[RMDB]
This 177-nucleotide RNA was probed chemically with 2A3 and DMS.
Source: RMDB library 15KREP, as collected in RNAgym.
The RNA was probed in 150 mM KOAc, 10 mM MgCl2 and 150 mM bicine (pH 8.5) at 24 C.
DMS adducts were read by reverse transcription with MarathonRT.
For 2A3 the reverse transcriptase was SuperScript II with manganese.
RNA sequence: GGGAACGACUCGAGUAGAGUCGAAAAGGUGGAGAUGCCAUGCCGACCCGAAGAGGAAAGGAAGGACACAGACGCGAACCGUGAGUGGAACCCUCGAUCCUUUAUUGGGGGGUACACUCGAGGAGUGGAAGAAAUAAGGGUUCGCCCUUAUUUCUUCAAAAGAAACAACAACAACAAC
Reactivity to 2A3 in 0.01 (KOAc 150mM, MgCl2 10mM, bicine 150mM(pH8.5), 24C), signal-to-noise 3, nucleotides 027 to 126: g060g020u050g020g040a090g000a080u100g060c020c010a030u060g000c020c010g070a080c020c010c010g010a040a020g030a020g030g020a080a020a010g020g000a010a030g030g000a020c010a010c000a090g110a050c020g020c010g050a050a030c000c010g080u080g020a000g010u030g010g010a090a030c000c000c000u010c000g020a040u090c020c100u170u240u180a060u050u050g010g000g000g000g020g000u010a000c000a000c010u010c000g000a020g000g000a030g030u160g040
Reactivity to DMS in 0.01 (KOAc 150mM, MgCl2 10mM, bicine 150mM(pH8.5), 24C), signal-to-noise 4, nucleotides 027 to 126: g000g020u010g000g000a150g010a130u000g010c020c050a040u000g010c050c020g000a130c030c020c030g010a090a090g020a100g010g000a040a080a070g010g000a050a070g010g010a080c100a060c070a090g010a100c050g000c050g010a070a120c040c020g000u000g020a030g010u010g000g010a150a180c000c000c000u010c010g000a020u020c300c170u010u000u010a030u000u010g000g000g000g010g000g000u010a130c020a010c000u000c010g010a050g000g000a080g030u010g000